[RMDB]
RNA sequence: GGGAACGACUCGAGUAGAGUCGAAAAGAUAUGGAGACUAGAACUACGUCGAUUGGGAAUCGUUGAAAACGUAAACUCGGAAACGAGUUUACGUUGGAGAUUCCUAGAGACGCUAGUCUCCUAAGUCGAAUAUCACUUGGUUCGCCAAGUGAUAUUCAAAAGAAACAACAACAACAAC
Reactivity to DMS in 0.01 (KOAc 150mM, MgCl2 10mM, bicine 150mM(pH8.5), 24C), signal-to-noise 6, nucleotides 027 to 126: g010a080u010a300u010g010g010a030g020a020c000u000a000g020a120a070c200u020a300c020g010u000c000g000a300u010u010g020g010g000a010a000u000c000g020u010u010g030a210a060a010a010c000g000u000a000a000a000c000u000c000g000g000a090a070a210c000g010a020g000u000u000u000a000c000g020u000u000g000g000a090g010a010u000u000c000c000u000a010g000a260g000a020c010g010c000u000a000g000u000c000u000c000c000u000a000a050g010u000c080
Reactivity to 2A3 in 0.01 (KOAc 150mM, MgCl2 10mM, bicine 150mM(pH8.5), 24C), signal-to-noise 5, nucleotides 027 to 126: g080a020u130a040u250g000g010a010g000a020c010u020a010g020a250a150c240u270a090c300g010u010c030g140a290u120u300g020g000g010a010a010u010c040g110u290u280g040a050a080a010a000c000g000u010a000a010a000c000u000c000g010g000a050a080a060c000g000a000g000u000u010u000a000c000g000u000u010g000g000a000g000a010u000u000c000c000u000a000g000a000g000a000c000g000c010u000a000g000u020c000u000c000c000u000a010a000g010u020c060